[RMDB]
RNA sequence: GGGAACGACUCGAGUAGAGUCGAAAAGGUGGCUCCUUCUCAGCAGAGGGGUGUGCUCACUGGGAGUCACCGAUUUAGCAUGUUCGUCCUACUUUAGUACCGACUACGGUGUAGGACGUUCAUGCGAGGGAUCGAGAACCUUCGGGUUUUCGAUCCCAAAAGAAACAACAACAACAAC
Reactivity to 2A3 in 0.01 (KOAc 150mM, MgCl2 10mM, bicine 150mM(pH8.5), 24C), signal-to-noise 9, nucleotides 027 to 126: g000g000u000g000g000c000u000c000c010u100u060c090u030c050a040g000c050a030g090a110g080g090g030g060u170g060u050g040c000u020c020a050c030u020g000g000g000a000g000u000c000a000c000c000g000a000u000u010u050a010g000c000a000u000g000u000u000c000g000u000c010c000u000a020c020u170u190u110a120g070u090a090c030c040g140a160c140u210a170c160g000g020u040g010u010a000g000g000a000c000g000u000u000c000a000u000g000c000g000a130
Reactivity to DMS in 0.01 (KOAc 150mM, MgCl2 10mM, bicine 150mM(pH8.5), 24C), signal-to-noise 3, nucleotides 027 to 126: g000g020u000g000g000c000u000c010c000u000u010c170u020c140a040g050c020a050g030a090g010g010g030g010u040g030u000g010c050u000c160a090c130u000g000g030g000a000g010u000c000a020c000c010g010a010u030u010u040a150g000c000a010u010g030u000u000c000g020u000c020c000u000a010c000u020u020u030a140g010u040a040c090c060g020a240c260u010a060c080g000g000u000g010u000a010g000g000a010c000g020u010u000c000a010u000g000c000g010a080